[RMDB]
RNA sequence: GGGAACGACUCGAGUAGAGUCGAAAAAUCGCCUGAGCGAGAGAAGCUCGGCGUGCACCAUGCGUCCGUACGUCAUACGAGUACCUCCUGCCGAAUGAGUCGCAUGAAGAGCGCCUCGAGGGUCUCCAUAACACCGUUGUUUCGACAACGGUGUUAUAAAAGAAACAACAACAACAAC
Reactivity to DMS in 0.01 (KOAc 150mM, MgCl2 10mM, bicine 150mM(pH8.5), 24C), signal-to-noise 3, nucleotides 027 to 126: a120u010c070g000c000c010u010g020a060g010c000g010a170g000a150g010a110a110g000c010u000c000g020g020c070g010u010g000c130a140c060c010a060u000g010c040g000u010c020c050g030u000a050c080g010u000c050a060u010a110c150g010a100g020u010a100c120c040u000c020c030u010g020c080c030g010a110a060u020g010a070g010u000c010g030c020a050u010g010a120a120g020a120g000c030g000c050c010u000c030g010a060g000g000g000u010c020u000c020c110
Reactivity to 2A3 in 0.01 (KOAc 150mM, MgCl2 10mM, bicine 150mM(pH8.5), 24C), signal-to-noise 2, nucleotides 027 to 126: a000u030c010g010c030c020u120g010a010g010c050g060a140g000a000g040a300a020g030c010u010c010g000g000c000g000u030g000c000a040c000c010a000u040g030c020g020u000c030c020g040u090a040c000g030u010c040a000u090a200c090g020a030g080u090a110c020c000u000c010c020u000g030c000c010g020a050a020u050g010a050g110u010c010g010c010a030u090g070a070a080g060a040g050c030g010c010c020u030c020g010a050g060g000g050u000c010u010c010c010
The record gives the reactivity of an RNA of 177 nucleotides to DMS and 2A3.
DMS adducts were read by reverse transcription with MarathonRT.
Conditions: 150 mM KOAc, 10 mM MgCl2 and 150 mM bicine (pH 8.5), 24 C.
The data come from the RNA Mapping Database (RMDB), library OK2TST.
In probing experiments dimethyl sulfate is read out at A N1 and C N3, which are open when not base-paired.